[RMDB]
RNA sequence: GGGAACGACUCGAGUAGAGUCGAAAAGAUAUGGAAUUCUCUGGAUGUGCUUCUUUCGGAAACGAAAGAAGCACAUACCAGAGGAAUUCCUAAGUCAAAUCCAGAACGGGUUCGCCCGUUCUGGAAACUGUAAGGUGUAGUUCGCUACACCUUACAGAAAAGAAACAACAACAACAAC
Reactivity to DMS in 0.01 (KOAc 150mM, MgCl2 10mM, bicine 150mM(pH8.5), 24C), signal-to-noise 2, nucleotides 027 to 126: g000a030u000a300u010g000g010a040a010u000u000c020u000c000u020g000g020a040u000g020u000g010c010u010u000c000u000u000u000c010g010g010a130a090a290c000g000a010a030a000g010a000a010g000c010a000c000a000u000a020c010c000a000g000a020g000g000a010a020u000u000c010c000u000a040a180g000u000c030a090a160a150u020c000c010a000g000a030a020c000g010g000g010u000u010c300g000c000c010c010g000u000u000c020u000g000g000a000a020a050
This 177-nucleotide RNA was probed chemically with DMS. Reactivities are given for positions 27 through 126. It was measured as part of the RMDB library TTRDES. The reactions ran in a buffer of 150 mM KOAc, 10 mM MgCl2 and 150 mM bicine (pH 8.5), at 24 C. For DMS, 2,130 sequencing reads were counted.